[RMDB]
RNA sequence: GGGAACGACUCGAGUAGAGUCGAAAACAGGAAUGGCGGGACCCCACUUCAGCAGGGUCCGCGUUCCAUCCUUUCUUACCUGAUGGCCGGCAUGGUCCCAGCCUCCUCGCUGGCGCCGGCUGGGCAACAGCUUGAUAAACUUCGGUUUAUCAAGCUGAAAAGAAACAACAACAACAAC
Reactivity to DMS in 0.01 (KOAc 150mM, MgCl2 10mM, bicine 150mM(pH8.5), 24C), signal-to-noise 2, nucleotides 027 to 126: c260a070g000g000a000a030u000g000g040c000g020g030g010a020c000c000c020c030a120c190u010u030c300a110g000c150a050g010g000g000u000c000c000g020c010g010u000u000c000c000a070u010c020c020u000u000u000c060u000u010a080c050c050u030g050a100u000g020g010c000c000g000g000c000a170u000g030g000u000c300c010c000a010g000c000c050u040c170c100u010c120g000c000u000g030g010c190g030c000c010g010g000c000u000g010g000g020c090a100a160
Reactivity to 2A3 in 0.01 (KOAc 150mM, MgCl2 10mM, bicine 150mM(pH8.5), 24C), signal-to-noise 1, nucleotides 027 to 126: c010a010g000g110a070a060u120g300g300c090g050g140g010a020c010c010c040c010a050c070u300u300c050a090g000c050a040g020g010g000u000c000c000g000c000g000u000u040c020c000a040u000c010c000u040u170u090c010u070u140a080c030c030u070g120a230u180g250g000c070c020g020g000c060a100u240g030g090u080c060c000c000a020g000c000c000u050c040c000u020c010g030c010u000g000g050c020g000c000c000g000g040c020u010g000g010g000c000a060a030